[RMDB]
The record gives the reactivity of an RNA of 207 nucleotides to 2A3 and DMS. It was measured as part of the RMDB library OK3TST. The RNA was probed in 150 mM KOAc, 10 mM MgCl2 and 150 mM bicine (pH 8.5) at 24 C. For DMS, 2,565 sequencing reads were counted.
RNA sequence: GGGAACGACUCGAGUAGAGUCGAAAAGAUUUGCAUCAUCAUUGGGGUAUGCCGCCUGUCUGAGAUUAACGGGUUCCGCCGUGGGUAUCGGGCAGCGUUCAGCGGCGAAAAAGAAUAGCACUUUUUGUUAAAACUGCCGUAACGUCAUUUGAUAAAGUCUGUUACUGACUUUCGAGUCAGUAACAGAAAAAGAAACAACAACAACAAC
Reactivity to 2A3 in 0.01 (KOAc 150mM, MgCl2 10mM, bicine 150mM(pH8.5), 24C), signal-to-noise 2, nucleotides 027 to 156: g050a010u060u090u110g020c030a090u010c000a000u000c000a020u080u070g010g040g000g000u040a020u090g030c020c000g050c010c000u020g000u020c000u000g030a060g030a100u020u120a040a050c000g020g030g000u230u050c080c120g040c000c000g020u000g000g100g000u080a010u040c000g000g000g000c010a000g020c050g050u080u040c060a010g000c010g000g000c030g000a000a010a000a000a040g060a080a070u050a120g080c020a040c040u030u000u010u090u050g080u040u070a090a140a070a050c030u030g000c000c030g030u040a020a020c010g070u060c060a080u040u070u120g110a110u220a090a090a030g070
Reactivity to DMS in 0.01 (KOAc 150mM, MgCl2 10mM, bicine 150mM(pH8.5), 24C), signal-to-noise 1, nucleotides 027 to 156: g020a110u000u000u000g030c050a060u020c040a100u000c020a080u010u000g020g000g000g010u010a040u000g000c000c030g000c040c020u000g000u000c010u020g010a060g000a080u000u000a090a020c000g030g000g020u000u000c130c130g030c010c020g000u000g020g030g020u000a020u010c040g030g010g040c000a050g010c090g040u000u010c080a150g060c050g040g010c020g030a010a010a070a030a080g000a120a180u000a050g000c080a080c070u000u000u000u000u000g000u010u000a070a050a110a040c030u000g010c010c020g060u000a020a040c040g000u000c080a120u000u000u000g010a140u010a050a050a120g010